[RMDB]
RNA sequence: GGGAACGACUCGAGUAGAGUCGAAAAUAGUCCGGGUAGCCCGGCGUUACCUGUAACCCGAGAUCGCCGAUACGCGGGGGACGAAGCCAAGGGAAGAUGCGUCGAAGGGACUCCAGCCUGGAAUCUCAACGGAGAAGCCCCGUCCUGCUUGGAUGGUCAAUACUGAUAUGUUCGCAUAUCAGUAUUGAAAAGAAACAACAACAACAAC
Reactivity to 2A3 in 0.01 (KOAc 150mM, MgCl2 10mM, bicine 150mM(pH8.5), 24C), signal-to-noise 3, nucleotides 027 to 156: u100a010g020u000c040c000g010g010g000u030a060g020c040c060c050g050g000c000g020u000u040a010c000c000u010g050u090a030a070c000c000c000g010a020g010a130u110c030g010c030c040g140a080u050a100c160g010c020g020g020g010g010g020a010c030g040a060a010g010c000c020a050a040g040g000g020a020a060g040a060u090g030c050g050u070c050g050a080a070g020g000g000a020c000u010c040c000a090g020c040c060u150g010g070a080a080u070c040u030c050a050a080c040g020g010a050g020a080a020g020c010c040c010c020g030u000c010c010u090g120c060u100u150g010g010a040u060g060g040u010
Reactivity to DMS in 0.01 (KOAc 150mM, MgCl2 10mM, bicine 150mM(pH8.5), 24C), signal-to-noise 1, nucleotides 027 to 156: u000a140g030u010c010c000g010g000g010u000a070g030c000c030c030g030g040c090g030u000u000a000c050c020u010g010u000a040a050c060c000c000g000a090g000a150u010c030g040c000c020g000a240u010a040c070g020c000g000g000g020g000g000a110c060g010a080a120g030c000c030a040a100g000g000g000a060a100g020a120u010g010c100g060u010c030g020a120a280g030g020g000a040c010u000c040c020a140g000c100c060u000g010g030a050a110u010c070u000c040a080a230c040g030g000a200g080a080a130g000c020c040c000c020g010u010c020c020u000g040c110u010u010g010g040a080u010g030g030u010
The record gives the reactivity of an RNA of 207 nucleotides to 2A3 and DMS. For 2A3, 1,925 sequencing reads were counted. The RNA was probed in 150 mM KOAc, 10 mM MgCl2 and 150 mM bicine (pH 8.5) at 24 C.